[RMDB]
RNA sequence: GGGAACGACUCGAGUAGAGUCGAAAAGCGGUGAAUUAUUCGGUGUCAUAGGAGUAGAGUCUUUUGGUAAGAUGCUGAUAAUGAGUAGGGGAGAUGAAAGUUAAUCGUUCCCUGUCUCUCCGCUGGACGUUAACUCUAUGUUCGCAUAGAGUUAACGAAAAGAAACAACAACAACAAC
Reactivity to 2A3 in 0.01 (KOAc 150mM, MgCl2 10mM, bicine 150mM(pH8.5), 24C), signal-to-noise 6, nucleotides 027 to 126: g040c040g000g070u100g080a090a050u070u060a070u130u190c030g010g000u020g030u030c030a040u100a110g030g030a020g050u130a050g050a050g160u050c020u050u110u060u100g070g010u040a100a050g010a030u020g000c010u010g010a040u030a070a040u070g030a000g030u080a080g020g000g000g000a030g010a010u050g050a070a100a070g060u130u180a070a030u040c020g040u030u020c000c000c000u000g010u010c010u000c000u010c000c000g000c010u020g030g040a000
Reactivity to DMS in 0.01 (KOAc 150mM, MgCl2 10mM, bicine 150mM(pH8.5), 24C), signal-to-noise 6, nucleotides 027 to 126: g020c050g010g010u010g010a130a050u000u000a040u000u010c040g020g010u000g020u000c020a100u010a090g010g000a040g010u000a130g000a160g010u010c010u000u000u000u000g020g010u010a080a100g000a030u000g010c020u000g010a050u000a030a040u010g000a080g020u000a110g010g010g010g010a030g000a020u000g000a060a090a160g000u000u010a050a090u000c010g010u000u000c000c000c000u000g000u000c010u000c010u000c010c010g020c040u000g000g000a300

Structure probing data (2A3 and DMS) for a 177-nucleotide construct. Reactivities are given for positions 27 through 126. Source: RMDB library RFMREP, as collected in RNAgym. The reactions ran in a buffer of 150 mM KOAc, 10 mM MgCl2 and 150 mM bicine (pH 8.5), at 24 C.